Chemical mapping of a 177-nucleotide RNA with DMS and 2A3. Conditions: 150 mM KOAc, 10 mM MgCl2 and 150 mM bicine (pH 8.5), 24 C.
[RMDB]
RNA sequence: GGGAACGACUCGAGUAGAGUCGAAAAGGACGCGAACCCGGGCAACCCGGCCGCCGGCGAACGGUUCAAGGCGGUUUCGGAGGCGCAUAACGUGCUGUCGGAUCCGGCCAAGCGCAAGGAGUACGACAAAGAGCGAGUAGUUCGCUACUCGCUCUUUAAAAGAAACAACAACAACAAC
Reactivity to DMS in 0.01 (KOAc 150mM, MgCl2 10mM, bicine 150mM(pH8.5), 24C), signal-to-noise 2, nucleotides 027 to 126: g000g000a120c030g000c050g010a070a150c110c030c010g000g010g000c050a090a120c040c000c000g010g020c000c010g010c000c000g060g060c150g020a040a070c110g020g000u020u010c050a130a140g010g000c050g000g010u000u000u030c000g030g000a090g000g000c040g020c010a060u030a220a130c180g000u000g010c020u000g030u010c010g000g020a070u010c010c000g000g000c000c000a100a200g000c070g020c030a050a050g020g010a040g000u000a100c040g010a090c150
Reactivity to 2A3 in 0.01 (KOAc 150mM, MgCl2 10mM, bicine 150mM(pH8.5), 24C), signal-to-noise 1, nucleotides 027 to 126: g010g000a000c000g010c000g120a090a080c090c000c040g030g000g000c090a130a120c050c000c020g000g000c010c070g010c010c000g030g040c040g020a250a050c160g060g070u020u100c070a020a010g040g010c040g010g000u000u090u000c060g000g010a040g000g000c000g000c070a070u190a060a000c150g020u100g000c000u050g020u060c000g050g000a060u000c000c000g000g010c030c010a190a020g000c040g000c160a080a000g050g010a020g090u160a030c000g010a000c000
It was measured as part of the RMDB library OK1LIB.